[RMDB]
RNA sequence: GGGAACGACUCGAGUAGAGUCGAAAACUCCGGUCGCCGCCGCGGUGUCCGCGCGUGGGUCCUGAGGGAGCUCGUCGGUGUGGGGUUCGAGGCGGUUUGAGUGAGACGAGACGAGACGCGCCCCUCCCACGCGGGGAAGGGCGCCCGCCUGCUCUCGGUGAAAUCUUAACUUCGGUUAAGAUUUCACAAAAGAAACAACAACAACAAC
Reactivity to 2A3 in 0.01 (KOAc 150mM, MgCl2 10mM, bicine 150mM(pH8.5), 24C), signal-to-noise 1, nucleotides 027 to 156: c010u000c000c030g010g080u060c040g010c030c000g000c020c000g020c010g080g020u120g150u090c040c000g000c010g000c050g000u040g000g020g000u020c020c040u040g000a220g020g070g000a040g100c010u010c050g100u020c050g110g130u040g050u090g080g030g000g050u040u120c080g020a040g000g030c000g020g000u000u060u150g010a040g000u070g030a020g000a010c030g020a010g010a060c050g040a050g030a070c040g030c010g020c000c000c000c000u030c030c000c020a110c110g150c130g010g020g000g010a000a000g000g000g000c010g000c000c000c000g030c000c000u060g020c040u000c010u000c070g030